Conditions: 150 mM KOAc, 10 mM MgCl2 and 150 mM bicine (pH 8.5), 24 C. Chemical mapping of a 177-nucleotide RNA with 2A3 and DMS. It was measured as part of the RMDB library TTRDEL. 2A3 adducts were read by reverse transcription with SuperScript II with manganese. The DMS profile rests on 1,164 reads. Reactivities are given for positions 27 through 126.
RNA sequence: GGGAACGACUCGAGUAGAGUCGAAAAGAUAUGGACCGUGAAGGAACGAAGAACUAUAUGAUCUCGGAAACGAGGUUUGUAUAGGGAGUUCCCACGGUCCUAAGUCAAACUCUAGUUCGCUAGAGAAGAUAUGAGUCACGUUCGCGUGACUCAUAUCAAAAGAAACAACAACAACAAC
Reactivity to 2A3 in 0.01 (KOAc 150mM, MgCl2 10mM, bicine 150mM(pH8.5), 24C), signal-to-noise 2, nucleotides 027 to 126: g040a000u030a050u070g000g000a020c010c010g030u010g090a200a200g000g000a010a000c060g140a190a180g000a110a020c000u010a010u000a010u050g000a030u010c010u010c000g010g040a040a050a090c020g010a010g000g000u060u160u200g050u000a000u010a000g010g020g000a040g000u000u000c000c000c000a000c000g000g020u020c000c010u000a020a010g000u000c010a040a010a050c000u000c000u010a010g040u060u080c290g000c120u000a020g000a020g010a040a050
Reactivity to DMS in 0.01 (KOAc 150mM, MgCl2 10mM, bicine 150mM(pH8.5), 24C), signal-to-noise 2, nucleotides 027 to 126: g000a040u000a300u000g000g000a000c000c000g000u000g060a250a090g050g000a000a000c010g000a160a180g020a070a220c000u000a000u000a000u010g000a000u000c000u000c000g000g000a110a090a200c000g040a000g010g000u000u000u010g060u000a000u000a020g000g000g010a080g000u000u000c020c000c000a020c000g010g000u000c000c000u000a000a020g040u000c030a130a170a170c000u010c000u000a020g020u000u020c170g050c000u000a000g000a010g000a090a090